Source: RMDB library OK2TST, as collected in RNAgym. Structure probing data (2A3 and DMS) for a 177-nucleotide construct. The reactions ran in a buffer of 150 mM KOAc, 10 mM MgCl2 and 150 mM bicine (pH 8.5), at 24 C. For DMS the reverse transcriptase was MarathonRT. For DMS, 848 sequencing reads were counted.
RNA sequence: GGGAACGACUCGAGUAGAGUCGAAAAGCAGGCAUCGGUUACGGAUACACCGUAUUUCAUUUCACUGCGCGGUUGCUCGGAAGACUGAUUGCCCUCGUGGAUAUUACUUUCGAUCAUCAGACCAAUAGUCGCCAUCAGUAUUCGUACUGAUGGCGACAAAAGAAACAACAACAACAAC
Reactivity to 2A3 in 0.01 (KOAc 150mM, MgCl2 10mM, bicine 150mM(pH8.5), 24C), signal-to-noise 2, nucleotides 027 to 126: g030c040a030g060g000c030a050u040c140g010g050u000u050a010c000g000g020a050u080a130c140a050c070c000g020u030a030u050u210u100c010a050u050u030u100c110a100c070u030g000c030g000c020g080g000u070u030g000c010u010c010g010g060a060a070g050a100c160u120g010a070u080u180g040c000c010c040u090c080g100u300g020g010a000u010a040u090u130a010c010u000u020u040c030g010a010u050c030a030u020c030a010g050a050c010c020a030a110u070a030
Reactivity to DMS in 0.01 (KOAc 150mM, MgCl2 10mM, bicine 150mM(pH8.5), 24C), signal-to-noise 2, nucleotides 027 to 126: g030c040a100g020g010c160a070u000c060g030g010u000u000a050c120g010g010a180u010a070c180a080c030c020g010u000a040u000u020u010c120a120u000u000u000c100a160c120u020g010c100g020c060g020g000u000u000g000c110u010c000g020g000a010a080g010a170c200u010g000a060u000u000g010c000c000c010u030c140g040u010g050g000a070u030a110u000u000a050c050u000u000u000c020g010a070u010c080a080u000c090a020g010a260c000c040a100a130u010a070